[RMDB]
RNA sequence: GGGAACGACUCGAGUAGAGUCGAAAAAGUUUGUGGUGCAUGCAUCAAAGAUAGGCUUCAACAUGUUCAUGAACACCGUCCUUGUCCAGUUCUGGGUUUGCUUGUCGAAAGCCGUGACAAAUCCAGACCAGACAGUUACAUUCGUGUAACUGUCUGGAAAAGAAACAACAACAACAAC
Reactivity to 2A3 in 0.01 (KOAc 150mM, MgCl2 10mM, bicine 150mM(pH8.5), 24C), signal-to-noise 1, nucleotides 027 to 126: a000g040u060u060u070g030u040g010g060u030g010c010a010u040g000c010a060u040c040a120a110a020g080a070u200a060g130g050c060u080u070c030a060a040c010a080u050g010u030u030c030a030u080g020a070a010c030a000c010c070g020u060c000c010u070u080g060u030c040c050a110g020u030u030c000u020g000g020g000u030u020u000g000c040u050u130g030u100c010g060a080a070a030g030c020c000g020u020g010a070c010a010a010a000u000c000c000a010g000a030
Reactivity to DMS in 0.01 (KOAc 150mM, MgCl2 10mM, bicine 150mM(pH8.5), 24C), signal-to-noise 3, nucleotides 027 to 126: a050g020u000u000u000g010u000g000g000u010g000c040a040u010g030c070a100u010c160a110a070a120g010a200u010a110g000g000c080u000u000c070a080a070c070a040u000g000u000u000c030a030u000g000a030a030c030a060c100c060g000u000c040c010u000u000g000u020c060c090a110g000u000u000c010u000g000g000g000u000u000u000g000c030u000u000g020u000c050g020a100a110a130g020c100c060g000u000g000a110c040a010a010a010u000c020c010a000g010a120